[RMDB]
RNA sequence: GGGAACGACUCGAGUAGAGUCGAAAAUACUAAAAUGGCAUAUUAAAUGAACUUGUUAAGGAUAAUUGAGAUCUUGUCCAUAUUCUCUUGUUCAUUACUUUAAGAGAUUCAAGCCAUUGGGCUGAUUAUAUCAGUCUAUUCUUUACAAUUUUAGCAAUACUAUUCGUCGGUUCGCCGACGAAUAGUAAAAAGAAACAACAACAACAAC
Reactivity to 2A3 in 0.01 (KOAc 150mM, MgCl2 10mM, bicine 150mM(pH8.5), 24C), signal-to-noise 2, nucleotides 027 to 156: u150a010c040u060a020a220a000a010u000g000g010c040a040u110a120u300u220a100a090a020u020g000a010a000c000u010u040g030u170u240a090a000g000g010a020u050a070a060u140u120g040a080g020a280u020c050u190u120g030u010c010c000a000u000a050u160u020c010u000c000u010u010g000u000u010c010a020u030u030a070c100u140u150u150a060a010g010a020g030a120u080u260c050a070a000g000c000c030a000u000u020g000g000g000c000u000g030a000u020u210a130u070a030u200c010a000g000u000c000u020a050u060u020c000u040u050u030a080c050a180a140u280u110u180u170a070g030c040a070a040